The record gives the reactivity of an RNA of 207 nucleotides to DMS and 2A3. The data come from the RNA Mapping Database (RMDB), library OK3TST.

RNA sequence: GGGAACGACUCGAGUAGAGUCGAAAAGGUCGCCCGAUUUCAGAUGCGCGAAAUGCCGAGUGAAGCCCGUCCAUUCGUCCACCUCCAGCAGCAGUUCGGUGAUCUUGACGUGCGGCAGGAUCAUUGCCGUCUGGUCGAUCAGCGCUUGGGCGGUGUCGAGGUUAUAUUUGUUCGCAAAUAUAACCUCAAAAGAAACAACAACAACAAC
Reactivity to DMS in 0.01 (KOAc 150mM, MgCl2 10mM, bicine 150mM(pH8.5), 24C), signal-to-noise 2, nucleotides 027 to 156: g010g050u000c040g010c010c000c020g010a130u010u000u000c070a110g000a090u000g010c090g040c020g000a080a100a100u010g020c070c070g000a120g000u000g000a120a190g020c040c010c000g010u010c020c040a110u000u000c010g000u000c020c000a070c050c030u000c020c040a100g010c040a080g010c000a110g010u000u010c100g020g010u000g020a020u000c000u000u000g010a050c060g040u000g030c070g010g020c020a050g050g010a150u000c070a090u000u020g020c000c010g020u000c040u010g010g020u000c020g000a120u000c030a120g000c030g000c050u000u000g020g010g000c040g000g010u000g010u010c110
Reactivity to 2A3 in 0.01 (KOAc 150mM, MgCl2 10mM, bicine 150mM(pH8.5), 24C), signal-to-noise 4, nucleotides 027 to 156: g060g040u050c030g020c010c010c000g040a040u040u120u050c070a080g060a180u110g060c040g010c010g100a060a090a060u130g000c040c020g090a020g050u050g070a070a020g030c010c000c000g010u030c010c000a040u040u070c000g050u030c030c010a050c020c060u060c040c010a020g030c030a020g000c000a030g060u130u120c030g020g010u040g020a000u000c000u010u070g020a030c030g070u110g030c040g030g000c000a010g020g030a030u100c030a050u040u160g030c020c000g090u070c040u080g040g000u020c020g010a050u030c040a010g020c000g020c040u030u050g010g000g000c000g020g000u100g030u020c090

The DMS profile rests on 6,177 reads. The RNA was probed in 150 mM KOAc, 10 mM MgCl2 and 150 mM bicine (pH 8.5) at 24 C. The 2A3 profile rests on 3,587 reads.